Notes:
The record gives the reactivity of an RNA of 207 nucleotides to 2A3. Values are in units of 0.01, from 0 to 300, in steps of 10. The 2A3 profile rests on 949 reads. Conditions: 150 mM KOAc, 10 mM MgCl2 and 150 mM bicine (pH 8.5), 24 C. Reactivities are given for positions 27 through 156.
[RMDB]
RNA sequence: GGGAACGACUCGAGUAGAGUCGAAAAGGACAAGUUCGCUUGUCCAAAAAACCGUAGGCUCGUACCAACGCAACAGCGUGCGUAGCUUCGAAAGAGGCUGAUCACGACAUGCGUUGAAGAAGAGCCUAAACGGAAAAAACGAGGGUUCGCCCUCGAACCACAAUAGUCGGUUCGCCGACUAUUGUGGAAAAGAAACAACAACAACAAC
Reactivity to 2A3 in 0.01 (KOAc 150mM, MgCl2 10mM, bicine 150mM(pH8.5), 24C), signal-to-noise 1, nucleotides 027 to 156: g000g000a000c030a020a020g000u050u090c130g130c190u010u000g000u010c020c000a000a030a000a000a000a120c000c000g010u000a000g000g010c000u010c020g030u100a030c010c000a000a000c000g000c000a000a130c030a300g040c010g000u010g000c010g060u100a000g000c010u000u000c010g030a080a040a000g030a020g010g000c000u010g030a140u080c000a000c030g180a160c000a020u020g000c000g000u020u040g000a000a000g060a030a000g010a000g050c000c000u000a000a000a000c000g000g100a090a000a000a000a000a000c030g000a010g040g010g000u060u140c240g190c020c000c000u000c010g020a000a010